[RMDB]
RNA sequence: GGGAACGACUCGAGUAGAGUCGAAAAGGAUACCAAAGGGCCUAGACUAUUCCUCGGUGAGGGAUCAGGAUCCAUGCUUACAACCUAUUACAUGCUUCUGGGUCCUUCUAAGACUUAUUAUAACACUGAGGUCUUGAACGUAGGCUUAGUUGGACAGAUUUCUUGUGAUAUUCGUAUCACAAGAAAUAAAAGAAACAACAACAACAAC
Reactivity to DMS in 0.01 (KOAc 150mM, MgCl2 10mM, bicine 150mM(pH8.5), 24C), signal-to-noise 4, nucleotides 027 to 156: g010g020a190u010a300c020c020a050a120a140g010g030g050c010c010u000a080g010a120c070u000a170u000u000c010c000u000c040g030g030u000g010a080g000g010g000a000u000c040a070g020g000a030u000c020c000a030u000g030c050u000u010a140c080a130a150c140c110u010a300u000u010a030c010a030u000g010c030u000u000c020u000g000g030g030u000c010c020u000u000c020u000a080a110g020a110c090u000u010a120u000u010a140u000a090a160c090a100c040u000g040a040g020g020u000c020u000u000g020a080a080c100g000u000a010g020g020c000u000u000a070g000u000u000g000g030a110c130a120g000
Reactivity to 2A3 in 0.01 (KOAc 150mM, MgCl2 10mM, bicine 150mM(pH8.5), 24C), signal-to-noise 5, nucleotides 027 to 156: g050g010a070u080a140c030c000a020a040a080g060g000g000c030c010u040a050g010a130c010u010a020u050u020c010c010u000c020g020g030u030g010a110g040g090g000a060u060c070a020g000g010a000u000c010c000a020u130g040c010u220u170a080c050a170a140c040c030u180a190u260u220a110c110a090u160g020c000u050u080c030u040g050g000g000u000c010c000u000u020c030u050a070a050g040a020c010u030u060a050u190u110a140u200a190a050c010a000c010u010g010a010g000g000u000c000u020u090g040a140a030c070g150u020a000g000g000c020u020u030a040g010u010u010g020g020a060c040a050g070
Description: An RNA of 207 nucleotides, treated with DMS and 2A3 and read out base by base. The 2A3 profile rests on 2,950 reads. The DMS profile rests on 8,657 reads. The reactions ran in a buffer of 150 mM KOAc, 10 mM MgCl2 and 150 mM bicine (pH 8.5), at 24 C.